Conditions: 150 mM KOAc, 10 mM MgCl2 and 150 mM bicine (pH 8.5), 24 C. An RNA of 177 nucleotides, treated with DMS and read out base by base. Values cover nucleotides 27 to 126. High DMS reactivity at an A or C suggests that its Watson-Crick edge is free. The DMS profile rests on 531 reads. Source: RMDB library M2PK90, as collected in RNAgym. For DMS the reverse transcriptase was MarathonRT.
[RMDB]
RNA sequence: GGGAACGACUCGAGUAGAGUCGAAAAUUAAAGGAGUGAAGGUACAAGCGACAGUGUCCAACUGAGGUAAUCGACCACUGCCAGUUCCAAGACGUGCGUAGUCAACUCAAAGGCAGAACGCAAAAAACGGCCUAUCAUAUUUCGAUAUGAUAGGCCGAAAAGAAACAACAACAACAAC
Reactivity to DMS in 0.01 (KOAc 150mM, MgCl2 10mM, bicine 150mM(pH8.5), 24C), signal-to-noise 1, nucleotides 027 to 126: u070u000a060a150a110g050g050a100g000u010g100a170a010g040g010u000a100c070a020a110g030c100g000a060c120a030g000u000g010u030c060c080a030a120c100u040g000a070g010g020u010a020a050u000c050g020a060c040c030a050c100u000g030c050c020a100g030u000u000c030c040a060a120g000a070c120g000u000g010c080g030u030a080g000u000c020a030a050c170u000c100a020a120a070g000g000c050a120g010a050a020c040g070c070a000a070a050a050a070a120